The record gives the reactivity of an RNA of 177 nucleotides to DMS and 2A3. The data come from the RNA Mapping Database (RMDB), library OK2TRN.
RNA sequence: GGGAACGACUCGAGUAGAGUCGAAAAUUGAUCGGAGGUAAACGAUGUCGUUUGUGAUUGCUGCGCCGGAGGCGUUGGUCGCGGUCGCUUCGGAUCUGGCGGGCAUUGGGUCGGCGCUGGCGGAGGCGCCAUGAUUAUUUUUCGAAAUAAUCAUGGCAAAAGAAACAACAACAACAAC
Reactivity to DMS in 0.01 (KOAc 150mM, MgCl2 10mM, bicine 150mM(pH8.5), 24C), signal-to-noise 8, nucleotides 027 to 126: u010u010g000a080u000c030g010g010a070g010g010u010a060a120a090c050g000a080u010g010u000c020g010u010u000u000g010u010g010a110u010u010g010c040u000g010c040g020c010c020g010g010a130g010g010c030g010u000u000g010g010u000c060g020c050g020g010u000c040g010c120u000u000c100g010g000a070u000c040u010g010g030c030g010g000g000c030a050u000u010g010g010g010u000c040g010g000c040g010c030u000g010g010c040g010g000a110g010g010c200
Reactivity to 2A3 in 0.01 (KOAc 150mM, MgCl2 10mM, bicine 150mM(pH8.5), 24C), signal-to-noise 7, nucleotides 027 to 126: u090u110g020a030u050c030g030g020a020g050g080u120a070a060a050c040g030a060u110g070u110c050g020u030u060u090g100u070g060a110u090u150g020c030u040g010c010g010c030c020g080g040a060g070g070c020g030u030u060g060g100u050c030g000c030g060g020u050c020g010c090u120u130c050g090g000a060u040c040u060g080g010c010g000g010g010c020a020u050u150g090g000g020u040c020g020g010c030g010c040u040g020g000c030g010g030a040g030g040c070
The DMS profile rests on 28,027 reads. 2A3 adducts were read by reverse transcription with SuperScript II with manganese. The reactions ran in a buffer of 150 mM KOAc, 10 mM MgCl2 and 150 mM bicine (pH 8.5), at 24 C. High 2A3 reactivity points to a flexible backbone, as in loops and unpaired stretches.